[RMDB]
RNA sequence: GGGAACGACUCGAGUAGAGUCGAAAAGACUACCAAUAAGCCUGUAUUUGACUUAGUGAGCCGUAGUGUGAUAAGAACUCACACUACUAGUAUAUUGGCAAGUCAGGAAUACUUAGCCGGUAGAGAAGAUAUUGUGUAAUUUCGAUUGUACGAUAUCAAAAGAAACAACAACAACAAC
Reactivity to DMS in 0.01 (KOAc 150mM, MgCl2 10mM, bicine 150mM(pH8.5), 24C), signal-to-noise 9, nucleotides 027 to 126: g000a190c010u000a020c000c000a080a130u010a030a040g000c010c020u000g000u040a010u000u010u000g000a070c010u010u010a050g020u020g010a120g010c140c240g000u000a000g010u000g010u000g000a020u020a100a120g020a140a220c230u000c000a000c000a000c000u000a000c000u000a060g010u010a090u020a060u010u000g000g000c010a010a010g010u000c010a020g000g000a210a060u030a240c020u000u010a030g010c150c150g000g010u000a010g000a140g000a080a080
Reactivity to 2A3 in 0.01 (KOAc 150mM, MgCl2 10mM, bicine 150mM(pH8.5), 24C), signal-to-noise 9, nucleotides 027 to 126: g030a020c000u010a010c000c010a030a090u100a070a010g040c010c020u050g050u090a060u010u020u020g050a110c000u020u040a040g040u090g190a040g060c040c030g010u000a000g000u000g000u000g010a010u050a260a120g090a110a050c030u000c010a000c000a000c000u000a000c000u000a000g000u000a060u030a040u080u020g020g000c000a000a000g000u000c000a010g060g000a050a040u090a120c010u050u050a010g050c060c050g030g000u010a010g010a010g020a090a010
Source: RMDB library OK1LIB, as collected in RNAgym. Chemical mapping of a 177-nucleotide RNA with DMS and 2A3. 2A3 adducts were read by reverse transcription with SuperScript II with manganese. The 2A3 profile rests on 81,808 reads. For DMS, 101,962 sequencing reads were counted.